[RMDB]
RNA sequence: GGGAACGACUCGAGUAGAGUCGAAAACAGGAUUUCGAUCCUGCUUUAUCCUAAGUCGCUAGUAGCCAUUGAGGUCGAUAAGAUUCGGAAACGAAUCUUUUGACGACCAAUGAUGUGGUGGGCUAGCGAUAUGGAGACAGUGUACCUUCGGGUACAAGGUGAUGUUGGUUUUCGAACCAACAUCACCAAAAGAAACAACAACAACAAC
Reactivity to 2A3 in 0.01 (KOAc 150mM, MgCl2 10mM, bicine 150mM(pH8.5), 24C), signal-to-noise 1, nucleotides 027 to 156: c010a010g000g010a010u030u050u280c270g000a010u060c000c000u000g000c000u110u180u140a110u010c010c000u000a170a020g020u020c000g000c000u000a000g000u010a010g000c010c010a050u020u050g050a020g000g000u010c010g070a080u000a110a000g050a000u000u000c000g020g050a140a060a050c040g000a000a010u030c000u000u030u010u020g080a020c010g020a010c070c010a030a270u220g010a040u070g020u010g000g010u030g060g300g010c000u010a000g000c000g010a000u000a000u000g010g030a030g050a030c110a070g070u050g000u090a020c000c000u060u100c200g090g000g030u000a000c000a030a150